[RMDB]
RNA sequence: GGGAACGACUCGAGUAGAGUCGAAAAGCAGGAGUGUUCGCACUCCUGCAAAUGAAAGCGGCCAGCUCCAGGCCGGCAAACAAUAUGGAGCACAAAGUAAAGAAAGGCCUACGUUCGCGUAGGCCAAGUAAAAGUAACACUUCGGUGUUACUUUUACAAAAGAAACAACAACAACAAC
Reactivity to DMS in 0.01 (KOAc 150mM, MgCl2 10mM, bicine 150mM(pH8.5), 24C), signal-to-noise 2, nucleotides 027 to 126: g000c000a010g020g000a000g040u000g000u000u010c190g010c000a020c020u010c000c010u010g000c000a010a040a050u010g000a090a160a080g000c010g020g030c000c000a180g020c000u000c010c000a020g000g000c000c000g010g000c120a080a070a030c120a000a000u010a050u000g000g020a010g000c000a130c220a070a070a050g010u010a070a130a150g020a070a140a080g010g000c010c010u010a000c000g000u000u000c160g030c010g010u000a010g000g020c000c010a010a020
Reactivity to 2A3 in 0.01 (KOAc 150mM, MgCl2 10mM, bicine 150mM(pH8.5), 24C), signal-to-noise 2, nucleotides 027 to 126: g020c010a000g010g010a000g000u060g010u060u160c150g060c070a000c000u000c000c010u010g000c000a000a000a000u070g000a030a030a020g040c010g020g000c010c000a020g010c000u010c000c000a010g000g000c030c000g080g140c090a150a160a020c050a010a010u020a010u040g010g000a000g080c010a000c010a010a020a010g150u200a060a050a010g070a060a100a020g000g000c000c000u000a000c000g020u010u100c220g010c000g080u000a000g000g000c000c010a000a000
Chemical mapping of a 177-nucleotide RNA with DMS and 2A3. It was measured as part of the RMDB library M2PK50. DMS (dimethyl sulfate) methylates the pairing face of unpaired adenines and cytosines. The RNA was probed in 150 mM KOAc, 10 mM MgCl2 and 150 mM bicine (pH 8.5) at 24 C. DMS adducts were read by reverse transcription with MarathonRT. For 2A3, 3,262 sequencing reads were counted.